[RMDB]
RNA sequence: GGGAACGACUCGAGUAGAGUCGAAAAUGGUUAUUCGUAACCAAGGUGGGGGUCUUCGCCAAGUACUUUGAUCGUGGAACUACUCCUGAAGCCUCCACGGGAGCCACGGGAGUACGACGCGAAGACGGAGGCACCCUCAUGCCUACUUCGGUAGGAAUGAUGAAUUCUGAUUCGUCAGAAUUCAUCAAAAAGAAACAACAACAACAAC
Reactivity to 2A3 in 0.01 (KOAc 150mM, MgCl2 10mM, bicine 150mM(pH8.5), 24C), signal-to-noise 5, nucleotides 027 to 156: u090g000g000u030u010a050u080u170c260g040u050a020a010c010c010a050a050g150g010u040g000g010g000g000g010u010c010u000u000c000g010c020c020a050a020g010u010a010c020u210u300u180g030a030u040c010g000u010g020g000a080a040c050u150a060c010u300c000c000u010g010a010a010g000c000c000u000c000c000a000c000g010g000g000a000g010c000c000a000c000g010g010g000a010g000u000a010c020g020a020c020g000c000g000a000a000g000a020c090g000g000a000g000g010c000a000c010c000c000u010c000a000u060g020c000c000u000a010c000u040u070c280g080g000u010a010g050g000a050a110
Reactivity to DMS in 0.01 (KOAc 150mM, MgCl2 10mM, bicine 150mM(pH8.5), 24C), signal-to-noise 2, nucleotides 027 to 156: u000g020g020u000u010a020u000u010c250g030u000a000a040c000c000a080a060g010g020u000g000g010g010g050g040u000c010u000u000c020g030c020c000a020a300g020u000a020c030u010u000u010g000a110u000c050g050u010g000g020a170a070c080u000a300c010u010c010c030u010g000a040a080g000c010c020u020c000c000a260c080g020g000g000a020g030c010c030a060c010g030g000g000a020g030u000a030c010g000a300c200g000c000g000a020a060g010a050c000g030g020a030g020g030c010a060c020c010c000u000c010a030u000g030c020c010u000a020c020u000u000c250g030g000u010a040g000g010a170a110